[RMDB]
RNA sequence: GGGAACGACUCGAGUAGAGUCGAAAAGAUAUGGACGUCCUGUUGACAUGCCUGAUCUUCGGAAACGAAGAGCAGGCAACAGCAACCUGACGUCCUAAGUCAAAAGACUUAGCUUCGGCUAAGUCAAGUACAAUGGUAGGUUCGCCUACCAUUGUACAAAAGAAACAACAACAACAAC
Reactivity to DMS in 0.01 (KOAc 150mM, MgCl2 10mM, bicine 150mM(pH8.5), 24C), signal-to-noise 4, nucleotides 027 to 126: g000a040u000a230u000g000g000a030c000g030u000c000c040u000g000u000u000g010a070c080a240u010g000c010c010u000g000a020u000c000u000u000c000g010g000a040a080a100c010g010a020a010g000a020g000c000a010g010g010c000a000a020c210a170g000c000a010a010c000c040u010g000a010c000g010u000c000c010u000a000a060g000u000c030a110a120a140a160g000a020c000u000u000a000g010c010u000u000c200g020g020c000u000a000a010g000u000c000a020a090
Reactivity to 2A3 in 0.01 (KOAc 150mM, MgCl2 10mM, bicine 150mM(pH8.5), 24C), signal-to-noise 5, nucleotides 027 to 126: g020a000u050a020u090g000g010a000c000g000u000c020c050u010g010u020u010g090a180c130a290u300g000c010c010u010g020a060u000c000u010u000c000g020g020a050a040a040c010g000a000a000g010a010g010c010a010g000g040c000a000a000c020a010g020c000a000a010c000c010u010g010a000c010g000u000c000c000u010a020a000g020u000c020a060a040a060a180g000a010c010u010u000a000g020c010u050u070c300g100g010c000u020a000a000g000u010c000a000a030
The record gives the reactivity of an RNA of 177 nucleotides to DMS and 2A3. Reactivities are rounded to 0.1 and cut off at 0 and 3. 2A3 adducts were read by reverse transcription with SuperScript II with manganese. For DMS, 6,890 sequencing reads were counted. Reactivities are given for positions 27 through 126.